[RMDB]
RNA sequence: GGGAACGACUCGAGUAGAGUCGAAAAACGAGUCGUACGCGACUCGAAUGGUAUUGUCGGCGUAAAAGAACAAGACGUCACCGGACGCGUCCGGGCUAAAAAGCGAAACGUCAUCUACGGAUGACGAAAAACGGACCUGGGUUCGCCCAGGUCCGAACUAGUUUUGCUUGUUCGCAAGCAAAACUAGAAAAGAAACAACAACAACAAC
Reactivity to 2A3 in 0.01 (KOAc 150mM, MgCl2 10mM, bicine 150mM(pH8.5), 24C), signal-to-noise 1, nucleotides 027 to 156: a000c000g000a000g000u000c000g010u070a040c260g000c020g020a000c010u000c000g000a020a030u040g020g050u220a150u200u170g170u120c050g010g000c030g030u050a050a010a090a100g110a120a100c080a060a020g090a050c000g010u030c030a010c020c000g010g000a030c010g010c020g050u030c020c000g000g000g000c030u040a000a040a010a010a070g040c030g070a110a000a000c020g000u000c000a000u000c010u020a040c140g070g000a000u000g000a000c010g060a060a000a000a000a000c030g000g030a000c000c000u000g000g040g040u060u050c130g080c050c010c000a000g000g000u000c000c000g000a000a000
Structure probing data (2A3) for a 207-nucleotide construct. The 2A3 profile rests on 750 reads.